Record summary:
Structure probing data (2A3 and DMS) for a 207-nucleotide construct. The reactions ran in a buffer of 150 mM KOAc, 10 mM MgCl2 and 150 mM bicine (pH 8.5), at 24 C. For 2A3 the reverse transcriptase was SuperScript II with manganese. For DMS, 11,285 sequencing reads were counted. For DMS the reverse transcriptase was MarathonRT.
RNA sequence: GGGAACGACUCGAGUAGAGUCGAAAAGGGCUUGACGCAUCGCCCGAAUACGAUGCAUGUGCUUUUGCACUAAGAUAAAUGUCCGUAUGGUAGGGGACAUAGAACCUACUCAUUAAUGUCCGAAGAGUCUGGGACGAUCAUCAGGCUAGACUAAGAAGAUUUAUACUGGAUUCGUCCAGUAUAAAUCAAAAGAAACAACAACAACAAC
Reactivity to 2A3 in 0.01 (KOAc 150mM, MgCl2 10mM, bicine 150mM(pH8.5), 24C), signal-to-noise 8, nucleotides 027 to 156: g010g000g000c040u060u080g070a030c040g000c020a010u010c010g000c020c020c010g010a010a010u090a030c020g010a020u010g000c030a050u070g000u010g010c020u120u110u220u300g010c010a010c020u060a060a060g050a120u140a090a190a050u150g030u000c020c010g050u100a030u060g020g000u000a010g010g020g010g010a010c060a060u110a030g070a020a010c000c010u010a010c010u020c080a010u020u170a120a070u100g030u000c020c020g030a100a060g020a020g040u010c010u050g030g010g030a050c060g030a100u090c030a020u020c010a010g010g010c010u030a030g040a070c040u060a070a030g050a090a000
Reactivity to DMS in 0.01 (KOAc 150mM, MgCl2 10mM, bicine 150mM(pH8.5), 24C), signal-to-noise 4, nucleotides 027 to 156: g010g010g030c010u000u010g010a100c080g010c040a020u000c000g020c000c040c100g020a140a100u000a050c020g000a060u010g030c020a140u010g000u000g030c030u000u010u000u000g030c040a040c020u000a080a090g020a130u010a070a110a100u000g020u000c050c030g020u000a090u010g000g020u000a070g020g010g020g010a200c100a070u000a070g000a130a140c030c000u000a020c040u000c040a100u020u000a060a080u000g000u000c030c030g000a160a100g010a100g030u000c030u020g010g010g000a070c050g000a080u010c050a070u010c040a050g000g000c000u000a080g020a130c040u000a070a160g000a190a240